[RMDB]
RNA sequence: GGGAACGACUCGAGUAGAGUCGAAAAUGUCAAGCGAUUUUACGGACUCGACCUCAUAGCCAUUCGAAGACCACCAAGCCUCCGACCUGAGAAAAAGCUCGUUAAAGCGUUCGCCAUCACAGAGCCACACAAUAACAGUGUUCGCACUGUUAUUGUGAAAAGAAACAACAACAACAAC
Reactivity to 2A3 in 0.01 (KOAc 150mM, MgCl2 10mM, bicine 150mM(pH8.5), 24C), signal-to-noise 9, nucleotides 027 to 126: u200g030u060c050a070a030g040c040g090a050u020u030u050u160a060c060g030g020a030c010u010c040g070a080c010c000u020c020a050u090a040g010c030c020a040u060u060c060g080a080a030g040a050c000c020a020c010c010a040a010g020c000c010u010c010c000g070a090c000c010u080g030a050g080a050a090a010a010a010g030c010u010c020g060u060u090a130a060a010g020c020g010u020u030c060g040c040c000a020u070c020a040c020a040g080a010g040c020c000a020
Reactivity to DMS in 0.01 (KOAc 150mM, MgCl2 10mM, bicine 150mM(pH8.5), 24C), signal-to-noise 6, nucleotides 027 to 126: u020g010u020c100a090a140g020c060g010a080u020u000u000u030a100c080g030g000a080c060u010c040g000a100c050c010u000c040a070u010a100g000c030c040a030u020u000c070g010a090a080g020a080c030c020a040c050c060a070a100g010c050c020u000c040c000g000a070c040c010u000g010a110g010a040a050a050a090a100g010c010u000c050g020u010u030a050a060a120g000c050g020u000u010c030g010c020c010a050u030c060a050c100a080g010a050g000c030c090a180
Notes: Chemical mapping of a 177-nucleotide RNA with 2A3 and DMS. For DMS the reverse transcriptase was MarathonRT. 2A3 is a SHAPE reagent: it acylates the 2'-hydroxyl of flexible nucleotides of all four kinds. For 2A3, 23,667 sequencing reads were counted.